[RMDB]
RNA sequence: GGGAACGACUCGAGUAGAGUCGAAAAGCGUACUACGGAACUUGGAUUUAGGUGAGGGAGUCGUAAAAGUCGAAGUCCCAAAUAGGACUUCGUCGCUACGACGUUGAUCUCACCUUGUCAGUUCCGUAUCGCAAACGUGAUCGUUCGCGAUCACGAAGUUCAAAGUAUGUUUCGACAUACUUUGAACAAAAGAAACAACAACAACAAC
Reactivity to 2A3 in 0.01 (KOAc 150mM, MgCl2 10mM, bicine 150mM(pH8.5), 24C), signal-to-noise 9, nucleotides 027 to 156: g000c010g040u100a060c050u010a000c030g010g010a010a000c010u140u280g180g030a080u300u300u120a010g000g010u000g000a000g000g010g010a010g000u000c000g000u010a050a090a070a110g020u010c010g000a000a000g000u020c020c020c030a170a280a110u300a090g000g000a000c000u000u000c000g010u000c000g000c100u010a010c010g010a000c010g040u200u010g000a010u000c000u000c000a000c000c000u000u000g000u000c000a000g000u000u000c000c000g000u000a000u000c000g000c000a050a060a020c010g000u000g000a010u000c000g010u080u070c300g000c020g130a000u010c000a000c000g010a090a030
Reactivity to DMS in 0.01 (KOAc 150mM, MgCl2 10mM, bicine 150mM(pH8.5), 24C), signal-to-noise 3, nucleotides 027 to 156: g000c010g030u000a050c120u000a000c000g000g000a010a020c000u000u000g020g010a050u000u000u000a020g030g030u010g020a050g010g010g000a040g030u000c010g030u000a020a110a090a140g020u010c000g010a030a030g010u000c000c000c030a030a130a220u000a060g010g000a030c000u000u000c010g040u010c040g000c090u000a060c010g000a010c000g020u000u000g000a020u000c000u000c010a010c020c000u000u000g010u000c020a040g010u000u000c020c010g020u000a000u000c020g020c010a060a060a130c010g030u000g010a010u000c010g020u000u000c300g030c040g020a020u000c000a000c010g000a030a110
Structure probing data (2A3 and DMS) for a 207-nucleotide construct. For DMS, 15,640 sequencing reads were counted. Source: RMDB library RNAMAK, as collected in RNAgym. The reactions ran in a buffer of 150 mM KOAc, 10 mM MgCl2 and 150 mM bicine (pH 8.5), at 24 C.